[RMDB]
RNA sequence: GGGAACGACUCGAGUAGAGUCGAAAAGAAGGCACUUUCGAGUGCCUUCAUGGGGAGCUCAGGUCUCCCUCCCUUGCAAACUCCGUAAGGGAGGAGACCUAAUUAGGUGCACUUUCGAGUGCACCAAUAUGAUUGUCUUCUUCGGAAGACAAUCAUAAAAAGAAACAACAACAACAAC
Reactivity to 2A3 in 0.01 (KOAc 150mM, MgCl2 10mM, bicine 150mM(pH8.5), 24C), signal-to-noise 2, nucleotides 027 to 126: g000a000a000g000g020c000a000c010u080u090u240c300g090a020g000u000g000c000c010u000u000c000a000u010g000g000g030g000a050g040c060u050c100a010g040g000u000c010u020c070c000c000u030c000c000c000u010u000g010c000a120a160a270c070u110c180c090g000u020a000a010g000g010g000a000g010g000a000g000a000c000c000u000a000a040u090u100a030g000g010u010g030c000a000c000u040u060u120c260g110a010g000u000g000c000a000c000c000a000a000
Reactivity to DMS in 0.01 (KOAc 150mM, MgCl2 10mM, bicine 150mM(pH8.5), 24C), signal-to-noise 2, nucleotides 027 to 126: g000a020a000g010g020c010a000c000u000u000u010c170g020a010g010u000g010c000c000u000u010c000a020u000g000g000g010g010a200g030c070u010c090a000g000g000u000c000u000c100c020c020u000c000c000c000u030u010g020c010a110a100a150c230u000c160c120g000u010a010a030g000g010g020a010g000g010a060g010a010c000c000u000a000a040u010u010a100g020g020u000g000c000a000c000u000u000u010c180g000a010g040u000g000c000a000c000c000a020a030